[RMDB]
RNA sequence: GGGAACGACUCGAGUAGAGUCGAAAAGAUAUGGAACGAAUAACGGGUCUAAGGCAUAGGGAGCUGAAUGUCGGAAACGACAUACAGCGAAGAACUAUGCCUUAGACCCGUUAGUCGUUCCUAAGUCCAUUAUCGAUAGCUUCGGCUAUCGAUAAUGAAAAGAAACAACAACAACAAC
Reactivity to DMS in 0.01 (KOAc 150mM, MgCl2 10mM, bicine 150mM(pH8.5), 24C), signal-to-noise 2, nucleotides 027 to 126: g010a080u020a300u000g020g010a000a000c010g000a020a030u000a020a000c000g020g000g020u000c010u010a010a000g000g020c000a020u000a010g010g000g010a110g020c000u000g000a160a000u000g000u010c010g000g010a150a100a290c000g010a000c000a000u000a060c000a010g000c000g010a070a100g000a100a190c000u000a000u000g000c010c000u000u000a000g010a000c000c000c020g000u000u000a000g000u010c000g000u000u010c000c000u000a030a120g020u000c020
Structure probing data (DMS) for a 177-nucleotide construct. Reactivities are rounded to 0.1 and cut off at 0 and 3. DMS adducts were read by reverse transcription with MarathonRT. The RNA was probed in 150 mM KOAc, 10 mM MgCl2 and 150 mM bicine (pH 8.5) at 24 C.